This 177-nucleotide RNA was probed chemically with DMS and 2A3. The reactions ran in a buffer of 150 mM KOAc, 10 mM MgCl2 and 150 mM bicine (pH 8.5), at 24 C. Source: RMDB library OK2TRN, as collected in RNAgym. The 2A3 profile rests on 1,119 reads. For DMS the reverse transcriptase was MarathonRT.
[RMDB]
RNA sequence: GGGAACGACUCGAGUAGAGUCGAAAACUCAGCACUAUCCAUGCAUGAGGUACGAUCCAGUACCUAGGUGUAUCAUGCGUACGCUAGGACGGUACAGUAGCGCGACGGAUCUCGCGAUCUAUGGUACUAUCACCGGAGACUUCGGUCUCCGGUGAUAAAAAGAAACAACAACAACAAC
Reactivity to DMS in 0.01 (KOAc 150mM, MgCl2 10mM, bicine 150mM(pH8.5), 24C), signal-to-noise 2, nucleotides 027 to 126: c010u000c020a080g030c060a100c070u000a080u000c080c030a130u000g000c040a070u010g000a040g020g020u000a020c060g000a150u010c100c110a230g010u000a020c030c010u000a040g060g010u020g020u000a030u000c040a100u000g020c070g050u010a070c150g020c070u010a030g000g030a100c110g020g010u000a020c010a090g020u000a000g010c030g000c010g000a040c130g030g000a120u020c070u000c040g020c030g000a080u000c030u000a000u010g010g020u000a010c050
Reactivity to 2A3 in 0.01 (KOAc 150mM, MgCl2 10mM, bicine 150mM(pH8.5), 24C), signal-to-noise 1, nucleotides 027 to 126: c000u000c010a000g120c050a030c050u070a090u090c060c000a070u090g000c030a090u040g080a020g000g020u000a020c010g020a100u060c010c040a040g020u060a150c000c000u040a130g000g120u070g040u110a050u100c070a100u130g080c080g040u090a020c030g000c010u020a020g040g040a020c040g050g000u040a050c060a040g010u030a000g030c020g000c020g020a020c110g160g030a080u020c000u030c040g000c000g010a050u040c010u020a020u090g010g060u040a000c020